RNA sequence: GGGAACGACUCGAGUAGAGUCGAAAAACAAUCUGGUUCGCCAGAUUGUCAAUGUCUUGCUAAAAUCCUUGGAAGACUGUAUAUAUAGAAUAAAGGUCGAAAGUACCUGUGCUUUCGAGCACAGGAAGUAUCUUAGAUUGUUCGCAAUCUAAGAUACAAAAGAAACAACAACAACAAC
Reactivity to DMS in 0.01 (KOAc 150mM, MgCl2 10mM, bicine 150mM(pH8.5), 24C), signal-to-noise 6, nucleotides 027 to 126: a030c000a000a000u000c000u000g000g000u000u010c230g030c000c000a000g000a010u000u000g000u000c090a080a080u010g000u000c000u000u000g000c000u000a010a010a010a130u010c000c000u000u000g000g000a030a010g000a020c010u010g010u010a080u010a100u000a240u010a140g000a120a120u010a060a150a010g010g020u000c250g010a080a030a080g010u010a120c010c000u010g000u000g000c000u000u000u010c180g000a020g010c000a010c010a000g010g000a040a060
Reactivity to 2A3 in 0.01 (KOAc 150mM, MgCl2 10mM, bicine 150mM(pH8.5), 24C), signal-to-noise 9, nucleotides 027 to 126: a000c000a000a010u000c000u010g010g030u030u040c110g040c070c000a010g000a010u000u000g000u000c010a010a070u090g000u000c000u010u090g130c000u000a020a020a060a180u040c010c010u010u010g020g040a010a000g000a010c020u020g070u010a150u010a040u010a010u050a230g060a140a080u230a300a160a010g010g010u010c030g050a100a090a020g050u070a080c000c000u000g000u000g000c010u090u060u160c300g040a000g000c000a000c000a000g000g000a000a010